Chemical mapping of a 177-nucleotide RNA with DMS and 2A3. Values are in units of 0.01, from 0 to 300, in steps of 10. For 2A3, 4,895 sequencing reads were counted. 2A3 adducts were read by reverse transcription with SuperScript II with manganese.
RNA sequence: GGGAACGACUCGAGUAGAGUCGAAAAGAUAUGGAACAUUCAGGCUUUUGACGGAUGUCAUUCGGAAACGAAUGACAAUCCGAUAAGCCUAAUGUUCCUAAGUCAAACGGCAUCGUUCGCGAUGCCGCGCACCGAUAAGGUUCGCCUUAUCGGUGCGAAAAGAAACAACAACAACAAC
Reactivity to DMS in 0.01 (KOAc 150mM, MgCl2 10mM, bicine 150mM(pH8.5), 24C), signal-to-noise 2, nucleotides 027 to 126: g000a000u010a300u010g000g020a010a000c000a010u010u000c300a010g010g010c000u000u000u010u000g020a240c130g000g010a090u000g000u010c000a010u010u010c050g010g020a080a080a110c000g020a030a010u000g000a010c000a010a010u000c000c010g020a070u000a010a020g020c000c000u000a000a010u000g000u000u000c000c010u000a010a050g000u000c030a110a090a300c000g000g010c000a020u000c000g000u010u020c300g010c020g000a020u000g010c000c020g010
Reactivity to 2A3 in 0.01 (KOAc 150mM, MgCl2 10mM, bicine 150mM(pH8.5), 24C), signal-to-noise 2, nucleotides 027 to 126: g000a000u010a000u050g000g000a000a000c010a010u010u140c230a100g000g000c040u140u200u300u300g300a270c100g000g000a020u010g020u000c000a000u000u000c000g000g010a010a040a020c010g000a020a000u010g000a010c000a010a030u000c010c000g040a020u080a050a000g010c000c000u030a000a000u000g010u010u000c010c000u000a030a030g020u020c040a160a050a080c020g000g000c000a010u010c010g060u110u070c300g020c030g120a010u030g010c000c020g010

Record summary:
It was measured as part of the RMDB library TTRDES.